[RMDB]
RNA sequence: GGGAACGACUCGAGUAGAGUCGAAAAGUAGUAUAGUUUAGUUUUAAGAUAUGUCUCUACAGUUAAAGGGUGGUUAUUUCUAAUAAAUUUGGAAGUCAUAGAUUUCCCUAUAGUAACUGAUCCUGAGCUUUACUGCUAUAUUCGUAUAGCAGUAAAGAAAAGAAACAACAACAACAAC
Reactivity to 2A3 in 0.01 (KOAc 150mM, MgCl2 10mM, bicine 150mM(pH8.5), 24C), signal-to-noise 2, nucleotides 027 to 126: g030u050a000g030u030a050u040a040g050u010u080u100a070g020u040u060u150u200a060a040g020a080u120a040u190g100u030c030u000c010u050a050c030a030g020u070u110a200a080a000g010g000g010u020g020g010u010u070a020u040u030u000c010u030a090a080u060a140a300a100u140u050u050g000g000a010a010g010u000c020a100u070a160g050a070u050u040u040c020c000c000u050a060u010a080g050u020a080a040c000u010g040a070u040c000c020u040g060a030g030
Reactivity to DMS in 0.01 (KOAc 150mM, MgCl2 10mM, bicine 150mM(pH8.5), 24C), signal-to-noise 4, nucleotides 027 to 126: g020u000a060g010u010a040u000a050g010u000u010u010a060g010u000u010u010u010a070a110g010a090u000a040u010g010u010c010u000c030u000a060c030a100g010u010u010a050a080a070g010g010g020u000g000g000u000u000a020u000u000u000c020u000a050a050u000a070a070a140u010u000u000g020g000a030a010g020u010c080a170u000a140g000a070u000u010u000c010c010c020u000a040u000a080g010u010a030a040c030u000g000a100u000c010c000u000g000a100g010